[RMDB]
RNA sequence: GGGAACGACUCGAGUAGAGUCGAAAAAAAUAAAAUUCAAGUGAUUGAUGCUAAAGGUCAUCAUGUAUUACCAGGUUUUAUUGAUAUACAUAUUCAUGGUGGUUAUGGUCAAGAUGCAAUGGAUGGGAGUCUAACACUUGUUCGCAAGUGUUAGACUAAAAGAAACAACAACAACAAC
Reactivity to 2A3 in 0.01 (KOAc 150mM, MgCl2 10mM, bicine 150mM(pH8.5), 24C), signal-to-noise 3, nucleotides 027 to 126: a000a000a000u180a000a000a000a000u110u080c090a130a060g000u060g070a060u110u000g000a000u090g120c080u160a190a000a040g090g020u030c020a020u000c000a020u120g080u070a050u070u130a050c030c050a060g050g010u020u010u000u110a120u040u110g090a030u020a000u020a140c070a050u100a040u010u100c020a020u030g000g000u010g010g010u070u100a040u100g100g010u050c030a000a020g030a070u050g010c010a050a080u050g020g020a010u030g070g160g000
Reactivity to DMS in 0.01 (KOAc 150mM, MgCl2 10mM, bicine 150mM(pH8.5), 24C), signal-to-noise 2, nucleotides 027 to 126: a050a050a040u010a040a010a040a020u020u010c040a090a100g010u020g000a110u000u000g010a020u000g010c050u010a040a120a080g000g030u060c000a010u000c020a040u000g020u020a030u030u030a030c040c070a120g000g000u020u010u010u010a060u020u010g010a070u010a010u020a100c080a070u010a040u040u010c020a030u000g000g010u020g010g000u000u000a080u010g000g000u010c060a050a040g010a060u000g000c030a070a030u010g000g010a050u000g010g000g010